[RMDB]
RNA sequence: GGGAACGACUCGAGUAGAGUCGAAAAGGUGCAUGUUGGGCUUUUGCUACCUUGGGUAGCAUCGAAAGCCAAUAUGCUAUUCGCAAUAGCGUCCAUAUUGAUUUGUCUGAGCAACAAAUGAUUGAUUGUGAUUAUGUAGACAUGGGUUGCGAUGGGGUAUAUGCUGUUCCUUCGGGAACAGCAUAUAAAAAGAAACAACAACAACAAC
Reactivity to 2A3 in 0.01 (KOAc 150mM, MgCl2 10mM, bicine 150mM(pH8.5), 24C), signal-to-noise 1, nucleotides 027 to 156: g080g020u170g000c000a000u000g040u000u030g150g110g060c000u050u060u070u150g000c040u000a000c010c030u090u120g190g040g000u000a000g000c000a000u080c120g110a030a020a000g000c000c000a000a000u000a000u000g000c000u030a130u000u110c020g000c030a010a190u110a090g140c000g010u000c020c000a020u020a040u090u090g050a030u030u030u040g040u000c010u030g010a040g110c010a010a000c000a020a060a180u190g020a250u050u160g020a100u050u060g040u000g070a030u010u210a040u060g000u080a040g000a060c030a050u000g130g000g090u000u030g030c000g000a000u070g030g000g000g000
Source information:
Chemical mapping of a 207-nucleotide RNA with 2A3.